[RMDB]
RNA sequence: GGGAACGACUCGAGUAGAGUCGAAAAUAACUUAAUGGAGUGUAACACCUUGAAAAUAUUAGAGCUAAGGACUUAUUUGUCUGUUUGACCUUAUUCAUUUAAACUUUCUGCAAACUAAUGUGGUCACACUUUAUUUUAAUAGCCCAUCCUAGAGACACCUCACUAUGGAUUUCGAUCCAUAGUGAGGAAAAGAAACAACAACAACAAC
Reactivity to 2A3 in 0.01 (KOAc 150mM, MgCl2 10mM, bicine 150mM(pH8.5), 24C), signal-to-noise 2, nucleotides 027 to 156: u080a020a010c010u050u040a000a020u080g000g000a030g000u040g010u030a070a010c010a010c060c000u090u110g110a040a050a080a020u190a080u040u120a050g020a010g050c030u030a030a030g010g010a020c020u050u030a050u050u200u120g010u010c050u010g130u020u110u050g070a040c000c010u070u060a070u070u090c050a070u040u110u150a040a100a050c020u050u090u080c030u110g040c010a090a100a030c080u060a050a100u090g040u060g060g050u060c020a010c010a000c000u060u050u000a060u020u100u030u060a070a070u030a060g010c030c000c000a010u070c030c040u050a020g030a000g070a110c020a020
Reactivity to DMS in 0.01 (KOAc 150mM, MgCl2 10mM, bicine 150mM(pH8.5), 24C), signal-to-noise 1, nucleotides 027 to 156: u010a080a100c100u000u000a030a040u010g000g020a050g060u030g030u020a080a100c020a010c040c080u020u020g010a080a100a050a100u000a100u010u000a060g030a080g010c020u020a070a150g010g010a050c050u000u000a140u000u010u020g000u000c030u000g000u010u000u000g030a050c080c080u010u020a070u010u000c140a120u020u010u010a070a070a100c060u000u000u000c060u000g030c100a060a080a160c070u000a030a040u000g030u010g030g000u010c060a020c040a010c010u000u000u000a010u020u000u010u010a020a140u010a120g040c000c030c030a160u020c050c000u000a080g000a250g010a110c040a050